Conditions: 150 mM KOAc, 10 mM MgCl2 and 150 mM bicine (pH 8.5), 24 C. This 207-nucleotide RNA was probed chemically with 2A3. 2A3 adducts were read by reverse transcription with SuperScript II with manganese.
[RMDB]
RNA sequence: GGGAACGACUCGAGUAGAGUCGAAAAGUAACCUGAGUGUUCGCACUCAGGUUACAAAAAAGAUAUGGAUGUAUAGGGAGCCUGAUCGGAAACGAUAGGCGACGAUCUAUGACAUCCUAAGUCAAAAAAGUCCGUACUGGUUCGCCAGUACGGACAAGUCUUUCAAAUGGUUCGCCAUUUGAAAGACAAAAGAAACAACAACAACAAC
Reactivity to 2A3 in 0.01 (KOAc 150mM, MgCl2 10mM, bicine 150mM(pH8.5), 24C), signal-to-noise 1, nucleotides 027 to 156: g000u000a000a000c000c000u000g000a000g010u020g000u040u250c190g020c130a000c000u000c000a000g020g000u000u010a000c010a000a020a000a000a030a000g070a050u090a060u080g020g000a010u000g000u000a000u000a010g000g020g000a000g000c000c020u070g170a060u010c010g020g000a160a110a030c000g000a000u000a020g000g000c000g010a030c000g000a000u000c000u000a000u030g120a050c000a000u010c000c000u010a050a020g020u020c050a060a000a060a260a020a060g050u070c080c000g000u000a000c000u000g010g000u050u070c090g040c040c000a000g020u000a000c000g000g000a000c000a000a020